Structure probing data (DMS and 2A3) for a 177-nucleotide construct. The 2A3 profile rests on 1,244 reads. 2A3 adducts were read by reverse transcription with SuperScript II with manganese.
[RMDB]
RNA sequence: GGGAACGACUCGAGUAGAGUCGAAAAAAAUCAGAAUGGGAACUUUUAAAUAUGUCUACCAAAGAAAUUAUGGAUUUACUUGAAACAAUACCUGAAAAAAUUGAUGCAAUUAAAGCAGCAUCUGCUCUCCUAAAUAAUGGUUCGCCAUUAUUUAGGAAAAAGAAACAACAACAACAAC
Reactivity to DMS in 0.01 (KOAc 150mM, MgCl2 10mM, bicine 150mM(pH8.5), 24C), signal-to-noise 3, nucleotides 027 to 126: a050a090a000u030c030a040g010a090a040u010g020g000g000a140a100c140u010u000u020u010a020a070a090u020a020u010g000u000c020u020a080c120c080a050a070a060g000a120a040a080u030u020a130u020g000g000a060u000u000u000a050c050u000u010g000a040a020a040c060a050a040u000a180c020c000u000g000a000a070a050a060a090a070u040u000g010a020u000g000c000a070a070u030u010a070a090a120g000c300a060g000c020a010u000c000u000g000c110u020c160
Reactivity to 2A3 in 0.01 (KOAc 150mM, MgCl2 10mM, bicine 150mM(pH8.5), 24C), signal-to-noise 3, nucleotides 027 to 126: a000a000a010u140c050a020g130a150a170u170g020g010g020a010a020c030u080u060u060u170a080a150a110u300a050u110g070u000c010u040a110c010c020a100a100a010g140a090a210a070u170u110a120u100g020g000a000u000u000u060a100c030u020u050g120a100a040a000c080a060a040u110a140c030c000u050g210a020a000a050a000a050a060u090u220g010a000u000g000c010a030a100u020u140a300a100a050g060c070a000g000c010a040u030c010u000g020c010u000c000
Source: RMDB library OK1LIB, as collected in RNAgym.